This 207-nucleotide RNA was probed chemically with 2A3 and DMS. For DMS the reverse transcriptase was MarathonRT. Values are in units of 0.01, from 0 to 300, in steps of 10. For DMS, 2,421 sequencing reads were counted. It was measured as part of the RMDB library RNAMAK.
RNA sequence: GGGAACGACUCGAGUAGAGUCGAAAAGGGGUCCUUGCUUUCCGAGGAAAGGACAUGCUCUGAAGCCUCCACGGAGCAACAGCCUUUCUACCCACCGGAAAGGAAGGACGGAGGCACCCAAAAGGUUAUUUAGGCUGUUCGCAGCCUAAAUAACCAAGUUACAUCCUUUGUUCGCAAAGGAUGUAACAAAAGAAACAACAACAACAAC
Reactivity to 2A3 in 0.01 (KOAc 150mM, MgCl2 10mM, bicine 150mM(pH8.5), 24C), signal-to-noise 5, nucleotides 027 to 156: g030g010g010g000u010c000c010u010u030g210c000u000u010u000c000c000g010a040g020g030a010a000a000g020g000a030c060a140u200g000c000u000c000u010g060a120a030g010c000c010u010c000c010a020c020g000g010a000g030c030a030a040c080a040g090c000c000u010u000u010c010u040a120c080c090c050a070c060c000g000g020a010a000a000g020g060a010a000g000g000a000c020g000g000a000g000g010c010a030c010c000c020a040a150a010a030g000g000u010u000a000u000u000u000a000g000g000c000u010g070u060u100c300g010c150a000g000c010c000u000a000a000a000u000a000a000c000c000a000a000
Reactivity to DMS in 0.01 (KOAc 150mM, MgCl2 10mM, bicine 150mM(pH8.5), 24C), signal-to-noise 2, nucleotides 027 to 156: g020g010g080g000u000c000c020u000u000g000c000u000u010u000c060c020g000a300g000g000a020a020a010g020g040a040c000a230u000g010c010u000c010u010g000a030a190g010c030c010u010c000c000a300c010g010g030a020g020c000a050a050c000a170g010c010c000u000u000u000c020u000a070c030c000c030a300c090c010g000g010a020a060a020g030g000a030a050g000g020a000c050g010g010a030g050g040c030a060c000c020c010a020a120a130a140g020g010u010u000a000u010u010u000a010g010g070c010u000g010u000u010c210g020c000a020g000c010c000u040a000a010a000u010a020a000c020c000a020a030